Source: RMDB library 15KREP, as collected in RNAgym.
The record gives the reactivity of an RNA of 177 nucleotides to 2A3 and DMS.
The reactions ran in a buffer of 150 mM KOAc, 10 mM MgCl2 and 150 mM bicine (pH 8.5), at 24 C.
For 2A3, 1,422 sequencing reads were counted.
DMS adducts were read by reverse transcription with MarathonRT.
RNA sequence: GGGAACGACUCGAGUAGAGUCGAAAACAUGGUCCCAGCCUCCUCGCUGGCGCCGGCUGGGCAACAUUCCGAGGGGACCGUCCCCUCGGUAAUGGCGAAUGGGACCCAGAACUCUCUCUAGAUUCCCGUUAAAGAGAGACUUCGGUCUCUCUUUAACAAAAGAAACAACAACAACAAC
Reactivity to 2A3 in 0.01 (KOAc 150mM, MgCl2 10mM, bicine 150mM(pH8.5), 24C), signal-to-noise 1, nucleotides 027 to 126: c000a070u140g000g000u000c030c000c000a000g010c010c010u060c000c000u040c020g020c070u040g150g000c050g080c120c000g050g000c050u090g050g020g020c000a000a010c000a010u000u000c000c000g010a000g020g000g000g040a100c080c060g300u290c000c000c000c000u000c020g010g000u010a000a000u020g000g000c030g120a080a090u050g000g020g010a010c010c020c000a020g030a070a010c000u000c000u000c010u000c000u000a040g000a110u010u010c010c000c010
Reactivity to DMS in 0.01 (KOAc 150mM, MgCl2 10mM, bicine 150mM(pH8.5), 24C), signal-to-noise 2, nucleotides 027 to 126: c080a100u010g030g020u000c120c010c000a030g010c040c020u010c090c090u000c260g040c060u030g030g020c170g040c060c030g010g000c040u030g000g020g000c040a100a120c030a060u010u030c020c010g000a030g010g000g010g000a180c250c300g020u000c010c000c000c010u010c000g010g000u010a000a030u000g000g000c120g000a140a140u010g030g010g000a040c030c030c100a120g010a180a040c000u000c010u010c020u000c000u000a050g000a300u010u010c010c000c000